This 177-nucleotide RNA was probed chemically with 2A3 and DMS. For 2A3, 3,034 sequencing reads were counted. The reactions ran in a buffer of 150 mM KOAc, 10 mM MgCl2 and 150 mM bicine (pH 8.5), at 24 C. For DMS, 2,519 sequencing reads were counted.
RNA sequence: GGGAACGACUCGAGUAGAGUCGAAAAUGGAGGAGAGCCUGGCCAGGGACCGGCCAACACAGCAACACCACAGCAUGCUGGGUGUUGCAAGUGCCACCACGGGGUGCCGCAUCCAACCCGAGCAGCCCCUUAGCACAACUUUCGAGUUGUGCUAAGGAAAAGAAACAACAACAACAAC
Reactivity to 2A3 in 0.01 (KOAc 150mM, MgCl2 10mM, bicine 150mM(pH8.5), 24C), signal-to-noise 2, nucleotides 027 to 126: u070g000g010a040g020g030a110g010a030g060c020c040u050g010g060c010c010a060g090g000g040a040c090c030g010g010c010c000a080a020c050a000c000a020g000c000a000a000c000a000c010c020a250c000a190g010c100a120u220g060c000u000g000g030g000u000g000u000u000g000c000a010a000g000u000g020c000c010a050c030c000a060c070g090g000g000g030u080g040c040c020g020c020a030u000c000c020a020a080c020c000c000g000a060g010c000a040g020c000c020
Reactivity to DMS in 0.01 (KOAc 150mM, MgCl2 10mM, bicine 150mM(pH8.5), 24C), signal-to-noise 3, nucleotides 027 to 126: u000g010g000a180g010g000a140g010a160g020c070c040u000g030g010c040c030a120g020g010g010a100c130c050g020g020c020c050a060a120c050a030c090a190g000c000a010a010c000a030c000c000a090c010a030g010c050a070u000g010c020u000g010g000g020u010g000u010u010g000c010a030a040g010u010g000c020c060a130c100c050a120c130g000g000g010g020u000g010c040c050g000c050a120u000c010c030a070a130c010c050c010g000a080g000c090a090g010c070c120